[RMDB]
RNA sequence: GGGAACGACUCGAGUAGAGUCGAAAAUGGCGUAGCCAUCAAGAUCCUUGCUAGUGCUGUUUCCGAUUUCGCCGCUAUGGACUGGCAGAAAAUGAUGCAGGGUCUAGUUGCCAUGGGUAUGGUGCUUGGUGGCUUGGCGGUAUUUAGCAACCUCGUCCGUUAAUUGACGAUUCGUCGUCAAUUAACGAAAAGAAACAACAACAACAAC
Reactivity to DMS in 0.01 (KOAc 150mM, MgCl2 10mM, bicine 150mM(pH8.5), 24C), signal-to-noise 2, nucleotides 027 to 156: u000g020g020c020g020u000a120g000c020c010a030u000c020a090a100g010a100u000c040c020u010u010g030c020u000a130g070u000g010c020u020g000u000u010u000c000c030g010a300u010u000u000c040g020c030c020g020c060u000a160u010g040g020a100c070u000g010g040c030a090g000a040a020a060a150u000g010a130u000g010c070a060g020g000g020u000c020u010a090g020u000u010g010c000c050a050u000g040g000g050u000a140u000g020g040u010g000c060u000u000g010g030u000g010g030c040u000u000g010g060c040g000g030u000a030u000u000u000a130g010c050a090a130c010c010u000c050g010u000c010
Reactivity to 2A3 in 0.01 (KOAc 150mM, MgCl2 10mM, bicine 150mM(pH8.5), 24C), signal-to-noise 5, nucleotides 027 to 156: u090g070g000c050g070u090a010g000c010c000a000u010c020a020a020g030a070u080c020c020u050u140g010c020u020a030g050u050g090c030u030g040u050u050u020c040c060g090a130u060u030u070c050g000c030c010g000c070u110a110u210g080g050a110c090u040g030g000c030a030g080a020a110a030a040u190g050a040u070g000c030a020g040g070g020u030c010u040a040g020u050u140g010c010c010a060u060g090g000g120u270a060u080g040g020u060g080c020u030u020g010g000u000g020g000c000u000u030g030g000c000g020g000u040a060u010u070u080a040g000c030a020a040c010c020u050c020g050u020c030
Conditions: 150 mM KOAc, 10 mM MgCl2 and 150 mM bicine (pH 8.5), 24 C. This 207-nucleotide RNA was probed chemically with DMS and 2A3. Source: RMDB library OK3TST, as collected in RNAgym. For 2A3, 4,135 sequencing reads were counted. For DMS, 6,791 sequencing reads were counted.